[RMDB]
The record gives the reactivity of an RNA of 207 nucleotides to 2A3. For 2A3 the reverse transcriptase was SuperScript II with manganese. It was measured as part of the RMDB library M2RFPK. For 2A3, 813 sequencing reads were counted. The RNA was probed in 150 mM KOAc, 10 mM MgCl2 and 150 mM bicine (pH 8.5) at 24 C. Values cover nucleotides 27 to 156.
RNA sequence: GGGAACGACUCGAGUAGAGUCGAAAAGAUUCGCCGUCGGCAUUUCCCCAGCAGCCAUGACCUACCAGGCUGCGGUGCGGCUCGCCGCACAGGUCAUCCCUCAUCGGGCGCGUCCUGGGUCCUUCCAAAAACUGACUAACCUUCGGGUUAGUCAGAACCACCUUAAAGACUUCGGUCUUUAAGGUGGAAAAGAAACAACAACAACAAC
Reactivity to 2A3 in 0.01 (KOAc 150mM, MgCl2 10mM, bicine 150mM(pH8.5), 24C), signal-to-noise 1, nucleotides 027 to 156: g010a090u050u090c060g000c080c040g130u080c070g030g050c060a090u040u040u060c000c000c000c010a030g000c010a000g000c000c040a140u090g050a030c000c030u090a230c090c050a000g000g020c010u010g000c000g030g010u030g010c040g010g000c030u120c160g110c030c010g100c000a000c020a000g030g000u020c010a100u060c000c010c000u110c050a150u130c060g000g000g030c070g000c040g040u060c020c020u030g000g000g050u090c010c000u080u050c020c020a020a080a010a160a130c000u000g020a010c000u000a000a000c000c000u030u080c170g060g020g000u010u000a000g000u000c000a000g000a010a000